[RMDB]
Conditions: 150 mM KOAc, 10 mM MgCl2 and 150 mM bicine (pH 8.5), 24 C. Structure probing data (DMS and 2A3) for a 177-nucleotide construct. The 2A3 profile rests on 3,307 reads. Source: RMDB library OK2TST, as collected in RNAgym.

RNA sequence: GGGAACGACUCGAGUAGAGUCGAAAACGCUAAAGAUGUACUUUGCGUACAUACUGGUUUCAUAGCAGAGGGACACCACGACAUCAGAACCGUUUUUGGAGACUGUGGAGGAAUGCUUUUUGACCCAGUAGUAAAAUCGGUUCGCCGAUUUUACUACAAAAGAAACAACAACAACAAC
Reactivity to DMS in 0.01 (KOAc 150mM, MgCl2 10mM, bicine 150mM(pH8.5), 24C), signal-to-noise 4, nucleotides 027 to 126: c110g010c100u010a040a110a070g010a070u000g000u010a030c010u000u010u010g010c170g010u000a030c040a040u000a070c030u000g010g010u000u000u010c070a080u010a050g000c040a040g010a100g020g010g010a200c110a070c040c030a060c040g000a070c070a080u010c060a070g000a090a110c130c080g000u000u010u010u020u000g010g020a100g010a060c110u010g020u000g000g000a140g020g010a080a050u010g000c040u010u000u000u000u010g010a140c150c010c020a070
Reactivity to 2A3 in 0.01 (KOAc 150mM, MgCl2 10mM, bicine 150mM(pH8.5), 24C), signal-to-noise 2, nucleotides 027 to 126: c030g000c050u090a160a140a060g050a060u040g020u050a050c020u030u140u300g130c080g030u000a020c010a020u080a160c010u020g000g040u020u070u130c050a040u110a030g010c030a010g020a060g080g030g020a020c030a010c040c010a010c020g060a030c010a060u110c030a040g060a050a060c050c030g090u060u010u050u120u190g060g000a060g020a040c030u050g030u030g010g030a030g020g070a080a030u050g020c000u140u100u020u020u110g040a030c000c010c000a010